[RMDB]
RNA sequence: GGGAACGACUCGAGUAGAGUCGAAAAGGAGCCAGGGCUUCCAUAGGCCCAGCUCUGUACCUGUAGGGGGAUGGAAUCUGCUAAAAGUGUUCUGGAGUCGUUCUUGGAUAUCUGCUUGGUAUCUUCUAAUAUAGCUGAAAUUCGUUUCAGCUAUAUUAAAAGAAACAACAACAACAAC
Reactivity to DMS in 0.01 (KOAc 150mM, MgCl2 10mM, bicine 150mM(pH8.5), 24C), signal-to-noise 8, nucleotides 027 to 126: g000g000a020g010c000c050a130g020g000g000c010u000u010c220c230a120u020a090g000g010c010c000c010a290g000c000u000c000u000g000u010a060c020c000u000g010u030a080g010g020g000g000g010a100u020g020g000a090a110u000c020u000g010c050u010a060a070a090a090g010u010g010u010u010c040u010g000g010a020g020u000c000g000u000u000c000u000u000g020g020a040u010a020u010c050u010g010c180u010u000g000g010u010a040u000c000u000u000c040u000
Reactivity to 2A3 in 0.01 (KOAc 150mM, MgCl2 10mM, bicine 150mM(pH8.5), 24C), signal-to-noise 7, nucleotides 027 to 126: g010g020a010g030c060c090a150g010g010g000c040u130u040c160c050a160u190a140g040g000c000c000c000a000g000c000u000c000u010g010u060a080c010c010u030g080u120a130g010g070g010g000g020a030u100g040g030a050a060u040c020u060g010c040u100a070a080a050a060g090u110g090u170u070c050u100g050g000a000g000u000c000g000u010u000c000u010u030g020g010a030u040a030u070c050u070g060c100u090u100g020g000u040a040u030c000u010u000c000u010